The data come from the RNA Mapping Database (RMDB), library OK2TRN.
Structure probing data (DMS) for a 177-nucleotide construct.
The reactions ran in a buffer of 150 mM KOAc, 10 mM MgCl2 and 150 mM bicine (pH 8.5), at 24 C.
The DMS profile rests on 534 reads.
RNA sequence: GGGAACGACUCGAGUAGAGUCGAAAAAGCAGAUGAUCAUCCUAUGCUUGACCAGAGGAAACAAGCCAUCAAAGAUGGUGAACAAAAUGUCAGAAAAGGGCAAGAAGAUUGUCAAUGGCCUGAUAAAUGCUGGUCAAUGAUUCGUCAUUGACCAGCAAAAAGAAACAACAACAACAAC
Reactivity to DMS in 0.01 (KOAc 150mM, MgCl2 10mM, bicine 150mM(pH8.5), 24C), signal-to-noise 1, nucleotides 027 to 126: a040g000c010a100g000a040u000g000a080u000c190a020u010c050c080u020a070u000g070c000u000u000g000a240c010c000a040g000a060g050g000a050a140a010c070a080a300g000c020c000a000u000c080a150a100a130g000a000u000g040g000u000g040a100a010c270a110a020a060a070u020g000u000c040a090g000a060a070a070a160g000g000g000c000a050a040g000a070a100g000a170u010u000g000u000c000a000a100u000g000g050c300c010u020g000a040u000a130a080a090